About this RNA
Source: RMDB library OK1LIB, as collected in RNAgym. This 177-nucleotide RNA was probed chemically with 2A3 and DMS. For DMS the reverse transcriptase was MarathonRT.
[RMDB]
RNA sequence: GGGAACGACUCGAGUAGAGUCGAAAAGAAUAAGCAAAAAUGUGAUCUUGCUUGUAAAUACAAUUUUGAGAGGUUAAUGAAUUACAAGUAGUGCGAUUUUUGUCUCUCUCUGCAAUAACGAACCGAACAUUUAUAUCGCUUUCGAGCGAUAUAAAUGAAAAGAAACAACAACAACAAC
Reactivity to 2A3 in 0.01 (KOAc 150mM, MgCl2 10mM, bicine 150mM(pH8.5), 24C), signal-to-noise 7, nucleotides 027 to 126: g030a020a060u260a060a020g020c030a020a020a030a000a020u130g110u160g120a220u050c040u030u090g000c000u000u000g000u000a010a030a020u260a050c050a050a130u010u050u100u130g140a160g010a050g020g070u060u120a100a040u170g100a050a090u020u020a000c010a030a010g020u020a010g120u050g120c060g030a020u010u020u010u010u060g130u010c010u000c000u000c000u000c010u040g030c040a030a080u090a140a080c110g030a030a020c050c020g020a010a000
Reactivity to DMS in 0.01 (KOAc 150mM, MgCl2 10mM, bicine 150mM(pH8.5), 24C), signal-to-noise 5, nucleotides 027 to 126: g020a070a040u030a090a120g010c040a000a030a010a030a050u020g020u030g020a060u020c040u020u010g030c010u000u000g010u000a020a030a040u030a120c080a090a050u030u010u020u030g000a040g000a090g000g010u000u010a080a080u010g020a180a060u010u010a010c020a030a050g000u010a040g030u020g000c050g010a020u010u010u010u000u000g010u020c020u000c020u010c000u000c040u020g000c110a060a060u030a050a110c150g000a060a100c100c050g000a070a190